Source information: Source: RMDB library OK1LIB, as collected in RNAgym. Structure probing data (DMS and 2A3) for a 177-nucleotide construct. DMS adducts were read by reverse transcription with MarathonRT. As a SHAPE reagent, 2A3 marks flexible, mostly unpaired nucleotides at the ribose 2'-OH.
RNA sequence: GGGAACGACUCGAGUAGAGUCGAAAAAUCAGUGAUCUUAUUCUCAGAAUACGGGUCUAUUGCAUGCUGUUUUAUGUCAGAGAAUACAGGGUACAUAACAAAUAACGUUAGCAGGAGAGCAAUGCCGCGCAAUUGUUAAGUUCGCUUAACAAUUGCGAAAAGAAACAACAACAACAAC
Reactivity to DMS in 0.01 (KOAc 150mM, MgCl2 10mM, bicine 150mM(pH8.5), 24C), signal-to-noise 4, nucleotides 027 to 126: a040u020c090a060g000u010g010a050u000c010u010u020a050u000u000c000u020c070a110g010a080a060u030a040c140g000g010g000u020c040u040a040u010u000g000c080a080u000g040c010u020g020u000u000u020u020a060u020g000u000c050a080g010a070g000a090a050u030a090c140a060g000g000g000u040a030c100a040u000a050a050c170a070a040a090u060a050a090c170g010u000u020a020g000c040a060g020g000a090g000a050g000c040a030a020u020g000c050c070g000
Reactivity to 2A3 in 0.01 (KOAc 150mM, MgCl2 10mM, bicine 150mM(pH8.5), 24C), signal-to-noise 6, nucleotides 027 to 126: a000u180c080a040g090u040g130a080u010c010u070u050a070u050u020c090u000c050a030g060a090a030u080a110c090g030g010g030u040c070u150a080u030u100g030c040a050u090g080c020u010g080u070u080u040u090a050u080g070u070c030a000g000a000g040a180a000u090a100c020a050g000g000g080u070a030c040a080u080a110a040c050a080a130a070u200a140a030c080g040u040u030a010g000c030a010g000g090a110g020a000g060c020a040a030u050g020c020c000g010